Structure probing data (2A3) for a 207-nucleotide construct. Source: RMDB library M2RFOK, as collected in RNAgym. For 2A3 the reverse transcriptase was SuperScript II with manganese. The reactions ran in a buffer of 150 mM KOAc, 10 mM MgCl2 and 150 mM bicine (pH 8.5), at 24 C. 2A3 is a SHAPE reagent: it acylates the 2'-hydroxyl of flexible nucleotides of all four kinds.

[RMDB]
RNA sequence: GGGAACGACUCGAGUAGAGUCGAAAAAGCACGGUUUUUGAGGACGCAUUUUGUCCGUGCGGUAAUGCCCUCCUUUACAUUUUCUCGCAUGGUGCGGGAGUGUGGAGAGGAAACAAAAGCUAGUCUCGAUAGGCGGUUAACUUCGGUUAACCGCCAAGGGUUAUACAGGCUUCGGCCUGUAUAACCCAAAAGAAACAACAACAACAAC
Reactivity to 2A3 in 0.01 (KOAc 150mM, MgCl2 10mM, bicine 150mM(pH8.5), 24C), signal-to-noise 1, nucleotides 027 to 156: a000g000c000a000c020g010g000u000u000u000u040u040g080a110g060g020a000c020g010c150a160u010u010u010u000g000u030c000c000g000u000g020c020g030g010u150a030a070u280g000c010c000c000u060c070c000u090u080u020a030c000a000u020u070u100u000c030u000c000g040c020a070u300g170g110u300g040c000g010g000g010a020g000u020g000u000g000g000a060g020a020g010g010a000a070a000c000a000a000a000a000g030c040u090a030g040u000c020u020c010g040a070u190a090g000g000c000g020g000u010u000a000a000c000u060u060c140g020g020u000u000a000a000c010c020g000c000c000a000a000
For 2A3, 476 sequencing reads were counted.